[RMDB]
RNA sequence: GGGAACGACUCGAGUAGAGUCGAAAAUGGCCAAAUACUUAACCUUGAGUUGUGUAGAGAGAUUUUGUCACUUGGGUGUUUUUGCUUCACAUCUUCAUGGUCACACCUGAUGAAACUGCUAAGAGUGUCAUCAGUACCUGUUCGCAGGUACUGAUGAAAAAGAAACAACAACAACAAC
Reactivity to DMS in 0.01 (KOAc 150mM, MgCl2 10mM, bicine 150mM(pH8.5), 24C), signal-to-noise 5, nucleotides 027 to 126: u010g020g020c010c030a060a080a100u010a060c080u010u000a070a090c060c030u010u000g000a090g030u000u000g020u000g010u010a060g010a120g010a070g010a080u000u000u010u010g010u000c040a060c090u000u010g020g010g020u010g010u000u010u010u000u000g010c030u000u000c050a060c060a040u000c040u000u000c060a060u000g010g010u000c070a060c070a130c050c030u000g000a040u010g010a050a040a060c060u000g010c100u000a050a100g010a100g020u000g010
Reactivity to 2A3 in 0.01 (KOAc 150mM, MgCl2 10mM, bicine 150mM(pH8.5), 24C), signal-to-noise 2, nucleotides 027 to 126: u070g010g020c040c010a050a060a050u210a040c070u120u080a040a040c000c030u050u070g050a040g060u070u040g070u020g010u090a010g030a010g020a010g010a120u010u060u060u200g080u070c020a010c090u060u060g130g000g040u010g070u030u090u000u110u080g050c010u040u030c040a020c000a070u000c030u100u020c010a030u110g010g030u040c000a000c000a010c020c000u030g010a030u070g020a000a030a040c030u040g000c050u100a100a030g110a040g140u100g000